An RNA of 177 nucleotides, treated with 2A3 and DMS and read out base by base. The reactions ran in a buffer of 150 mM KOAc, 10 mM MgCl2 and 150 mM bicine (pH 8.5), at 24 C. The DMS profile rests on 1,223 reads.
RNA sequence: GGGAACGACUCGAGUAGAGUCGAAAAAAAAAGGACCUACAGCCGAGCGAGUGACUGAAAACGGCAAAGUCACGAAGCAUCGUUAUACCUAAAUGGUCGUUGCGAAAUAAGAGUUGUUCCCAGUAAACUGAUAUUAGCCAUUCGUGGCUAAUAUCAGAAAAGAAACAACAACAACAAC
Reactivity to 2A3 in 0.01 (KOAc 150mM, MgCl2 10mM, bicine 150mM(pH8.5), 24C), signal-to-noise 2, nucleotides 027 to 126: a050a000a060a060a000g120g000a000c010c000u010a010c020a010g000c010c010g070a020g050c040g030a070g040u000g000a000c010u020g050a180a160a110a150c030g110g010c020a110a000a020g010u030c000a000c010g020a050a000g020c010a040u020c000g010u030u090a100u070a090c020c010u170a290a230a160u280g030g010u030c050g000u020u060g030c030g050a120a030a050u100a180a050g010a000g020u000u000g000u020u000c000c000c000a000g010u040a010a010a010
Reactivity to DMS in 0.01 (KOAc 150mM, MgCl2 10mM, bicine 150mM(pH8.5), 24C), signal-to-noise 1, nucleotides 027 to 126: a130a020a110a130a060g000g000a010c010c010u000a010c060a110g010c050c020g020a070g010c100g020a200g010u010g000a020c000u000g000a030a050a040a070c070g000g020c040a070a090a010g000u010c000a010c000g010a080a120g010c010a030u000c010g000u000u010a110u000a050c020c030u000a080a040a070u010g000g030u000c060g010u000u000g030c050g000a100a070a060u000a060a200g000a000g030u020u000g000u000u000c000c000c000a030g000u050a020a030a150